[RMDB]
RNA sequence: GGGAACGACUCGAGUAGAGUCGAAAAGAUAUGGACUUGUCAGUUGUCAGGACUAAUGGUCGGAAACGACCAUUAGUCCUUGGAUUUACUGAGCAAGUCCUAAGUCAAAGUCGACUUCGGUCGACAACGUUCAGAUCGAGUUCGCUCGAUCUGAACGAAAAGAAACAACAACAACAAC
Reactivity to DMS in 0.01 (KOAc 150mM, MgCl2 10mM, bicine 150mM(pH8.5), 24C), signal-to-noise 1, nucleotides 027 to 126: g020a050u010a300u000g000g000a040c010u030u030g010u000c000a010g000u000u020g000u000c010a040g000g000a090c000u000a000a010u000g060g030u000c000g020g030a150a060a240c010g000a040c000c000a010u010u000a010g000u010c000c000u000u000g020g010a000u000u030u000a010c010u010g010a050g000c010a000a000g030u000c000c010u000a010a100g000u000c040a090a180a170g030u000c000g020a010c000u000u030c300g080g000u000c000g000a010c030a040a050
This 177-nucleotide RNA was probed chemically with DMS. The reactions ran in a buffer of 150 mM KOAc, 10 mM MgCl2 and 150 mM bicine (pH 8.5), at 24 C. For DMS, 948 sequencing reads were counted.